[RMDB]
RNA sequence: GGGAACGACUCGAGUAGAGUCGAAAACAGUGCCCCCAGUUGCAUAGCUCUGGGAGAUGACAUCCACCUUGAAUCUCCACAUUGGAACCUCUAGGGCUAUCACUUAGCGUCCACUGUAAUGUUACCACCUGCAGUUGCACAAGGGGCCCUGGAUGAACAUGAUGAUAUUAUUCGUAAUAUCAUCAUGAAAAGAAACAACAACAACAAC
Reactivity to 2A3 in 0.01 (KOAc 150mM, MgCl2 10mM, bicine 150mM(pH8.5), 24C), signal-to-noise 4, nucleotides 027 to 156: c020a020g040u020g060c000c000c000c000c000a010g020u110u060g030c090a080u060a040g010c010u010c020u070g060g010g000a020g010a040u070g020a020c010a050u010c020c010a070c030c060u060u090g070a100a050u090c040u040c100c020a060c020a100u040u060g090g080a300a300c010c010u000c010u010a010g030g010g000c020u020a040u050c010a040c030u010u070a010g060c020g090u000c010c020a010c020u010g000u040a050a110u070g060u140u110a080c060c060a040c040c000u010g000c010a010g000u040u020g020c070a010c020a060a070g000g000g000g000c000c000c000u030g000g020a060u090g030a030a010
Reactivity to DMS in 0.01 (KOAc 150mM, MgCl2 10mM, bicine 150mM(pH8.5), 24C), signal-to-noise 3, nucleotides 027 to 156: c040a130g030u000g020c010c010c010c000c050a170g010u000u000g000c060a090u010a120g020c040u000c010u000g010g060g020a030g010a050u000g000a200c060a090u000c020c060a070c090c050u000u000g020a180a110u000c050u000c040c040a110c120a290u000u000g000g010a100a160c020c010u000c020u010a080g010g030g000c010u000a040u010c060a080c050u010u000a090g030c070g010u000c030c040a060c030u000g020u000a070a060u000g010u000u000a100c120c060a060c070c040u000g010c050a060g020u010u000g000c020a040c040a100a060g030g020g040g000c010c030c010u000g000g010a110u000g000a110a240

This 207-nucleotide RNA was probed chemically with 2A3 and DMS. Reactivities are given for positions 27 through 156. For 2A3, 2,786 sequencing reads were counted. It was measured as part of the RMDB library OK3TST. For DMS, 7,763 sequencing reads were counted.